[RMDB]
The record gives the reactivity of an RNA of 177 nucleotides to DMS and 2A3. It was measured as part of the RMDB library OK2TRN. 2A3 adducts were read by reverse transcription with SuperScript II with manganese. Values cover nucleotides 27 to 126. Conditions: 150 mM KOAc, 10 mM MgCl2 and 150 mM bicine (pH 8.5), 24 C.
RNA sequence: GGGAACGACUCGAGUAGAGUCGAAAAAUAUAUGCAUGCCGUAGCCGCGAUGCGCUAGCCGCGGCCGUAGCGCCGAUCGAUUAAUGCUAUAAUAUGCGCUAGCGCGCUAAUCGAUGCUAAUCGCGUAGGUAGCGAACAUAUUCGUAUGUUCGCUACCAAAAGAAACAACAACAACAAC
Reactivity to DMS in 0.01 (KOAc 150mM, MgCl2 10mM, bicine 150mM(pH8.5), 24C), signal-to-noise 2, nucleotides 027 to 126: a100u000a090u010a070u010g000c040a010u010g030c070c030g000u000a060g000c080c050g000c010g000a070u030g010c030g030c030u000a010g020c010c030g010c040g000g040c020c070g000u010a070g000c120g020c030c030g020a120u050c100g010a120u000u010a120a070u020g020c070u000a150u010a050a070u000a100u000g000c110g010c040u020a030g000c010g020c070g000c050u010a140a060u000c090g030a080u000g000c000u000a070a080u000c060g020c140g020u000a060
Reactivity to 2A3 in 0.01 (KOAc 150mM, MgCl2 10mM, bicine 150mM(pH8.5), 24C), signal-to-noise 2, nucleotides 027 to 126: a020u090a000u050a030u150g020c010a020u100g120c060c000g070u000a000g020c030c010g050c000g000a050u110g010c030g000c010u010a020g010c080c010g000c010g000g020c030c020g110u000a020g000c000g060c050c010g090a110u170c040g030a060u090u230a150a060u230g000c000u010a010u060a190a150u160a090u300g040c000g010c000u000a000g010c010g030c040g020c030u020a050a000u030c000g000a000u060g000c020u000a080a010u090c060g010c050g160u010a020